[RMDB]
Overview:
Chemical mapping of a 177-nucleotide RNA with DMS and 2A3. Reactivities are rounded to 0.1 and cut off at 0 and 3.
RNA sequence: GGGAACGACUCGAGUAGAGUCGAAAACGGUGCCUCCCAGGUGUCGAUGCUGAAGGGCUAAGUCCUUUGAAGGAAGGGUCAUACUAUGUAAGGAAGGGAUUUGGUUUUAGGAAGCCAAUUUAUUAAGACUUCUCAGAGCAUUCGUGCUCUGAGAAGUAAAAGAAACAACAACAACAAC
Reactivity to DMS in 0.01 (KOAc 150mM, MgCl2 10mM, bicine 150mM(pH8.5), 24C), signal-to-noise 2, nucleotides 027 to 126: c050g000g010u010g010c010c020u000c060c060c050a090g000g010u020g000u000c040g000a020u000g010c020u000g000a160a110g000g020g030c040u000a060a100g010u020c000c030u000u000u010g000a160a190g000g010a120a060g020g000g010u010c090a120u030a050c130u000a090u030g000u010a090a080g020g010a070a070g000g000g010a070u000u000u000g010g020u000u000u000u000a110g000g000a100a060g000c060c020a040a030u020u010u000a020u020u010a080a140g010
Reactivity to 2A3 in 0.01 (KOAc 150mM, MgCl2 10mM, bicine 150mM(pH8.5), 24C), signal-to-noise 3, nucleotides 027 to 126: c040g020g020u040g000c000c000u000c000c010c020a020g000g080u070g050u100c020g030a020u090g000c030u020g040a070a100g020g010g000c000u020a000a090g020u010c050c040u120u030u170g220a140a100g060g000a030a040g040g000g030u010c030a010u040a130c020u150a030u220g060u100a100a020g030g040a030a030g000g000g000a000u020u000u020g080g040u060u080u040u050a030g080g120a000a070g000c000c010a040a030u140u070u110a150u090u110a090a030g020